[RMDB]
RNA sequence: GGGAACGACUCGAGUAGAGUCGAAAACAUACAAGCGUAAAGAAACAAUUGAUAAAUACAGUUACAGUGCGACAUUACAAGAGAUUGCCGAUAACGAUUACAACCUAAACAUACCGAGGUAUGUCGAUAAAGCCCGGAAUUUCGAUUCCGGGCUUUAAAAAGAAACAACAACAACAAC
Reactivity to DMS in 0.01 (KOAc 150mM, MgCl2 10mM, bicine 150mM(pH8.5), 24C), signal-to-noise 1, nucleotides 027 to 126: c000a060u070a150c100a040a010g130c160g010u000a040a080a000g030a120a180a150c180a050a100u030u010g000a170u010a010a120a000u080a220c150a010g000u000u000a160c140a050g030u020g000c010g040a000c000a040u030u010a160c100a040a030g030a050g000a080u050u000g050c000c040g000a010u030a080a050c280g000a070u000u000a000c000a070a070c050c070u000a100a070a010c070a030u080a070c010c030g000a190g000g000u000a000u000g000u000c060g050a110
About this RNA:
The record gives the reactivity of an RNA of 177 nucleotides to DMS. For DMS, 766 sequencing reads were counted. DMS adducts were read by reverse transcription with MarathonRT.